[RMDB]
RNA sequence: GGGAACGACUCGAGUAGAGUCGAAAAGUCUUUAUGAGGGUGAGGAAUUUAAGCAUCCCAGACACAAGUUCUGACUCAAACAUCAGCCUUUUAAUUAUGUGAAAGGGUCUCGCAAAAUUUAAUAAACUUAGUGGUAGGAGUUCAGGUAACACUACAAACCAUCAUAAAAUUUCGAUUUUAUGAUGGUAAAAGAAACAACAACAACAAC
Reactivity to 2A3 in 0.01 (KOAc 150mM, MgCl2 10mM, bicine 150mM(pH8.5), 24C), signal-to-noise 2, nucleotides 027 to 156: g020u000c020u040u130u040a110u140g040a070g020g000g020u060g020a040g000g110a060a060u130u160u100a200a000g000c010a010u020c000c020c000a010g040a020c040a000c020a110a020g040u090u070c030u050g030a020c010u030c110a050a080a000c030a080u050c050a030g070c010c000u160u080u000u020a070a060u090u150a100u130g040u000g060a040a010a010g020g000g000u050c040u070c070g000c000a000a060a080a070u100u170u150a150a040u120a070a060a050c010u030u040a020g000u030g050g000u000a030g000g030a070g000u050u050c010a000g020g050u060a020a010c050a010c080u110a010c070a090a100
Reactivity to DMS in 0.01 (KOAc 150mM, MgCl2 10mM, bicine 150mM(pH8.5), 24C), signal-to-noise 2, nucleotides 027 to 156: g040u000c010u000u000u000a080u010g010a100g040g020g060u010g010a180g010g010a090a080u000u000u000a110a140g000c060a140u000c020c030c010a180g000a240c090a130c100a050a110g010u000u000c030u000g000a070c030u010c040a110a120a120c060a070u000c030a090g030c160c010u000u010u000u010a080a130u000u010a060u000g000u000g010a020a100a090g030g020g010u000c010u010c050g010c010a060a070a070a110u010u010u010a040a130u000a100a060a100c020u010u000a040g030u010g010g040u010a080g000g030a120g000u010u000c040a040g040g020u000a060a040c030a080c060u020a060c050a070a240
Chemical mapping of a 207-nucleotide RNA with 2A3 and DMS. Values cover nucleotides 27 to 156. 2A3 adducts were read by reverse transcription with SuperScript II with manganese. Conditions: 150 mM KOAc, 10 mM MgCl2 and 150 mM bicine (pH 8.5), 24 C.